Chemical mapping of a 177-nucleotide RNA with DMS and 2A3. The data come from the RNA Mapping Database (RMDB), library OK2TRN. Values cover nucleotides 27 to 126. Conditions: 150 mM KOAc, 10 mM MgCl2 and 150 mM bicine (pH 8.5), 24 C.
[RMDB]
RNA sequence: GGGAACGACUCGAGUAGAGUCGAAAAUUUGUCAGUUCAGGGUGGUGGUCACAGAGUCUGGUGGUCUUGCAGUGUCACCUCUCUGUUCUCUGUCUUUGGUCUGGCACCUUUUACUGCCUCUGUGACCGCCGAUGUUACCAUUCGUGGUAACAUCGGCAAAAGAAACAACAACAACAAC
Reactivity to DMS in 0.01 (KOAc 150mM, MgCl2 10mM, bicine 150mM(pH8.5), 24C), signal-to-noise 1, nucleotides 027 to 126: u000u010u000g000u000c060a080g010u000u010c050a040g020g010g020u000g000g010u020g010g010u000c050a030c000a030g010a030g010u000c130u000g030g030u000g010g000u000c060u010u020g050c180a090g020u010g010u010c040a020c020c040u000c030u000c030u010g020u000u020c020u000c040u000g030u000c040u000u000u010g010g000u010c020u000g000g020c010a010c100c060u020u010u010u000a090c100u000g000c140c010u000c060u010g010u010g000a060c080c040
Reactivity to 2A3 in 0.01 (KOAc 150mM, MgCl2 10mM, bicine 150mM(pH8.5), 24C), signal-to-noise 2, nucleotides 027 to 126: u100u050u060g040u020c020a000g050u020u040c050a040g000g010g110u090g000g050u020g000g000u030c010a010c000a020g010a010g010u060c110u020g030g030u000g000g000u040c000u090u140g100c070a070g020u010g040u130c010a000c000c000u020c010u000c000u030g040u060u000c010u010c010u000g110u030c070u160u150u120g020g000u010c040u000g010g020c000a040c020c000u020u120u050u120a110c070u090g020c000c010u060c040u060g080u070g120a080c020c060